The record gives the reactivity of an RNA of 177 nucleotides to 2A3 and DMS. The RNA was probed in 150 mM KOAc, 10 mM MgCl2 and 150 mM bicine (pH 8.5) at 24 C. Values cover nucleotides 27 to 126. For DMS, 1,548 sequencing reads were counted.

RNA sequence: GGGAACGACUCGAGUAGAGUCGAAAAAGCACUCACAUUGCAUGCAGACUACAAAACAUUUGCAGAUACAAGGCAAGAACUAUUUGAUCAAUUUAAGAAUAUGUUAGAGCCCUUACAUACACAGAAACAUCUACAGGUCGUUCGCGACCUGUAGAUGAAAAGAAACAACAACAACAAC
Reactivity to 2A3 in 0.01 (KOAc 150mM, MgCl2 10mM, bicine 150mM(pH8.5), 24C), signal-to-noise 4, nucleotides 027 to 126: a000g100c040a050c010u030c000a040c000a100u020u230g030c010a000u040g000c030a020g040a100c050u080a110c160a030a110a110a070c050a100u070u020u090g020c000a020g010a080u120a130c100a090a000g120g000c030a050a090g030a170a000c030u050a120u080u100u140g110a110u110c070a170a290u150u100u270a060a040g010a110a060u080a080u200g000u010u090a050g040a030g030c000c010c010u010u000a020c020a020u160a020c050a000c000a120g110a050a070a000
Reactivity to DMS in 0.01 (KOAc 150mM, MgCl2 10mM, bicine 150mM(pH8.5), 24C), signal-to-noise 2, nucleotides 027 to 126: a030g010c070a010c060u030c000a100c000a060u020u000g000c010a050u000g020c060a010g000a070c080u010a060c180a050a100a160a090c090a070u000u010u000g010c000a000g000a100u010a090c230a140a110g000g000c030a010a080g000a030a000c040u020a030u000u000u000g010a140u030c090a030a140u040u030u030a110a060g000a030a000u020a050u020g000u000u000a080g000a240g020c010c000c000u000u020a010c090a040u040a000c180a040c240a100g000a090a050a090